[RMDB]
Background:
An RNA of 177 nucleotides, treated with 2A3 and DMS and read out base by base. The RNA was probed in 150 mM KOAc, 10 mM MgCl2 and 150 mM bicine (pH 8.5) at 24 C. For 2A3, 589 sequencing reads were counted.
RNA sequence: GGGAACGACUCGAGUAGAGUCGAAAAAGAUCACCCAUCGAGGUCAGAGGCACCUAAAAUGGACGGGAAUUAAUCCAGUUGCCGAUACCAUGGAACACCUUUUUUUUGGUGAUUGUGUAGAGUGGCGUUUUGGCAUUGAUUUCGAUCAAUGCCAAAAAAAAGAAACAACAACAACAAC
Reactivity to 2A3 in 0.01 (KOAc 150mM, MgCl2 10mM, bicine 150mM(pH8.5), 24C), signal-to-noise 2, nucleotides 027 to 126: a000g150a050u010c030a030c010c000c000a000u040c000g070a000g010g000u000c010a010g010a060g270g030c030a000c010c000u060a070a110a090a000u010g000g030a030c020g050g000g060a010a010u080u040a000a220u100c030c000a050g010u080u120g140c010c000g010a020u070a120c010c000a010u040g000g040a020a040c000a010c010c030u020u000u070u110u050u050u140u150g000g000u020g050a090u030u020g000u020g000u060a010g020a020g220u090g000g020c020g000
Reactivity to DMS in 0.01 (KOAc 150mM, MgCl2 10mM, bicine 150mM(pH8.5), 24C), signal-to-noise 5, nucleotides 027 to 126: a060g000a070u020c070a100c020c010c050a300u010c130g010a050g010g010u000c070a090g040a140g020g010c030a050c020c050u020a030a080a100a030u000g000g010a110c030g000g000g010a050a040u020u020a080a180u030c110c100a060g000u000u000g000c000c000g000a150u020a070c020c000a040u010g010g000a100a080c090a040c020c000u000u000u010u010u020u040u030u020g010g030u000g000a090u010u010g010u010g000u010a060g000a140g010u010g000g010c070g030
Values cover nucleotides 27 to 126.